Chemical mapping of a 177-nucleotide RNA with DMS and 2A3. DMS adducts were read by reverse transcription with MarathonRT. For 2A3 the reverse transcriptase was SuperScript II with manganese. It was measured as part of the RMDB libraries RFM100 and RFMREP.

[RMDB]
RNA sequence: GGGAACGACUCGAGUAGAGUCGAAAACUUCCUUCCAGGUCUCCGCCCGGGGGAAGGCGUCACGCAGCCCCAAAACUUAGCUCUGGUGGGCUGCGGCGCUGACUAAUAGCUCUUGGAUGCUGCCCUGGAAUGACAGAUUUUUCGAAAUCUGUCAUUCAAAAGAAACAACAACAACAAC
Reactivity to DMS in 0.01 (KOAc 150mM, MgCl2 10mM, bicine 150mM(pH8.5), 24C), signal-to-noise 8, nucleotides 027 to 126: c200u000u000c000c000u000u030c020c020a040g010g010u010c030u010c300c090g010c030c010c030g000g000g000g010g010a060a140g000g010c010g010u000c060a150c050g000c000a010g010c000c000c010c060a070a060a100a080c110u030u020a100g010c150u010c120u020g010g030u040g010g010g010c000u000g020c000g000g010c020g000c010u000g000a170c090u010a080a110u040a130g010c010u000c010u000u010g000g000a080u020g000c100u000g000c020c010c020u000g000
Reactivity to 2A3 in 0.01 (KOAc 150mM, MgCl2 10mM, bicine 150mM(pH8.5), 24C), signal-to-noise 9, nucleotides 027 to 126: c020u030u020c000c010u080u080c020c010a030g000g030u030c030u030c070c050g020c010c010c000g020g000g000g000g020a010a050g020g030c000g010u040c050a110c080g000c000a000g010c000c010c000c000a030a110a080a090c120u200u190a050g080c040u060c090u180g120g030u220g090g010g000c000u000g000c000g000g000c000g000c000u010g010a030c030u060a040a180u050a160g040c010u010c010u050u060g060g010a040u080g020c020u030g000c010c000c000u010g040